[RMDB]
RNA sequence: GGGAACGACUCGAGUAGAGUCGAAAAAGAAAGGAUACCGAAAGGUAUCCAUUUUGCACAUUGGAUUGCGGUAACCUCUCACGUGUGACGUUGAAGUAACUAUGUGCAGUAAUACCGCAAGAAAAAAGUUAACACAGAUCUUCGGAUCUGUGUUAACAAAAGAAACAACAACAACAAC
Reactivity to 2A3 in 0.01 (KOAc 150mM, MgCl2 10mM, bicine 150mM(pH8.5), 24C), signal-to-noise 1, nucleotides 027 to 126: a000g120a010a080a020g000g000a000u010a010c040c000g000a040a020a000g020g000u040a000u000c010c010a000u010u020u000u010g020c000a020c000a040u040u080g110g140a120u140u000g020c000g000g010u020a020a030c000c020u000c000u020c010a020c010g080u180g220u190g250a080c040g000u030u080g060a110a060g040u020a050a000c030u020a000u060g000u000g010c010a000g020u030a010a010u010a040c000c000g000c000a000a010g060a050a050a000a010a000a000
Reactivity to DMS in 0.01 (KOAc 150mM, MgCl2 10mM, bicine 150mM(pH8.5), 24C), signal-to-noise 2, nucleotides 027 to 126: a110g000a090a080a100g000g000a000u000a000c000c000g000a100a080a150g010g030u000a000u010c000c000a030u000u000u000u000g000c010a040c060a020u000u000g010g000a180u020u000g000c000g020g010u000a040a010c080c020u000c010u010c020a020c020g020u000g010u000g030a050c040g010u010u000g000a030a100g000u000a030a040c030u010a020u000g010u000g020c060a020g010u000a040a090u000a040c010c020g030c010a040a090g010a020a060a040a050a090a100